[RMDB]
RNA sequence: GGGAACGACUCGAGUAGAGUCGAAAACUCUGCUAGCUGUUCUUUCCCUUCUUACCCUUACAUACUUCAUCUGGGAGACUUUACAUAUGUGAUAUUUAUGAUCUUGUUAGACUGGUAAUUACAAAGUGUAAGAUUUAUAGUUCGCUAUAAAUCUUACAAAAGAAACAACAACAACAAC
Reactivity to 2A3 in 0.01 (KOAc 150mM, MgCl2 10mM, bicine 150mM(pH8.5), 24C), signal-to-noise 4, nucleotides 027 to 126: c000u000c010u000g000c010u010a040g020c060u020g050u230u040c000u040u000u010c000c000c000u010u020c030u010u020a030c000c010c000u040u050a030c030a070u080a080c020u040u040c020a120u030c070u100g070g060g000a030g050a040c020u110u160u110a040c030a040u120a040u160g060u040g080a030u040a080u170u130u020a090u110g040a070u020c030u070u040g040u100u030a020g030a060c050u020g050g010u020a040a030u060u020a070c070a100a140a050g050u020
Reactivity to DMS in 0.01 (KOAc 150mM, MgCl2 10mM, bicine 150mM(pH8.5), 24C), signal-to-noise 3, nucleotides 027 to 126: c020u000c010u000g010c010u000a080g030c270u000g010u010u000c020u000u000u000c010c010c000u010u000c050u010u010a100c050c020c020u000u000a070c080a070u000a050c060u000u010c080a050u000c100u000g000g030g030a080g010a090c090u000u000u000a090c070a070u000a070u000g000u000g000a050u010a060u000u000u000a060u000g000a070u000c030u000u000g010u010u010a050g010a080c080u000g000g010u000a030a070u010u020a070c130a080a070a130g010u000
This 177-nucleotide RNA was probed chemically with 2A3 and DMS. The reactions ran in a buffer of 150 mM KOAc, 10 mM MgCl2 and 150 mM bicine (pH 8.5), at 24 C. For DMS, 2,377 sequencing reads were counted. The 2A3 profile rests on 4,867 reads. Reactivities are rounded to 0.1 and cut off at 0 and 3. The data come from the RNA Mapping Database (RMDB), library RFMREP.